Annotation:
Chemical mapping of a 177-nucleotide RNA with DMS and 2A3. The DMS profile rests on 5,541 reads.
RNA sequence: GGGAACGACUCGAGUAGAGUCGAAAACGGCAGUUGGAUCGAGAUUUAGGCGACGGUAUCUGUGGGCGACGAAUAAGCGUCGUUGCAGAUACGCUAGCUCCCUAGGUAGUCUAGCGUGAUGCUAUGCUCUACUCAUGCGCUUCGGUGCAUGGGUAGAAAAAGAAACAACAACAACAAC
Reactivity to DMS in 0.01 (KOAc 150mM, MgCl2 10mM, bicine 150mM(pH8.5), 24C), signal-to-noise 1, nucleotides 027 to 126: c030g000g000c010a000g030u000u010g000g000a030u010c030g010a060g010a070u030u040u040a250g000g000c000g000a300c300g000g000u000a000u000c010u000g000u000g010g080g000c000g000a020c000g020a130a130u020a070a110g040c000g000u000c000g000u010u000g010c010a000g000a030u000a000c000g030c050u010a020g010c050u000c020c000c030u010a080g000g010u010a130g000u000c010u000a030g000c030g010u040g010a110u030g000c020u010a040u020g010c120
Reactivity to 2A3 in 0.01 (KOAc 150mM, MgCl2 10mM, bicine 150mM(pH8.5), 24C), signal-to-noise 1, nucleotides 027 to 126: c000g010g000c010a010g000u020u020g000g000a010u000c000g000a000g000a050u070u110u160a040g000g000c000g000a040c010g000g000u000a000u000c000u000g000u100g180g070g000c000g000a000c000g020a060a100u150a290a000g100c000g000u000c000g000u010u000g000c000a000g000a020u030a000c010g010c010u000a030g030c010u080c010c000c010u030a070g080g030u020a010g020u010c010u010a000g000c000g030u050g060a040u070g000c010u010a000u060g000c000
The reactions ran in a buffer of 150 mM KOAc, 10 mM MgCl2 and 150 mM bicine (pH 8.5), at 24 C. The 2A3 profile rests on 2,801 reads.